[RMDB]
RNA sequence: GGGAACGACUCGAGUAGAGUCGAAAAGAAGACGUGACGAAAAGUCACGAAAAAGAGCUAGCAACCGUCCGCUAGCAAAGAUCGAAAGAUCAAAGGACGGAAAGACCUGGGAGACCAGGUCAAAAGACAGUUUUAGCUGCUUCGGCAGCUAAAACUGAAAAGAAACAACAACAACAAC
Reactivity to 2A3 in 0.01 (KOAc 150mM, MgCl2 10mM, bicine 150mM(pH8.5), 24C), signal-to-noise 1, nucleotides 027 to 126: g190a060a000g110a010c000g000u000g000a000c010g030a250a000a000a300g000u000c000a000c000g060a020a000a000a000a000g160a050g000c000u000a000g000c000a060a030c000c000g020u000c000c000g000c000u000a000g030c030a000a160a000g000a000u000c010g050a180a000a000g000a010u000c010a040a000a000g000g000a000c000g000g040a040a040a040g000a000c000c000u000g000g000g000a180g110a070c000c000a000g000g010u000c000a000a000a000a000g010a000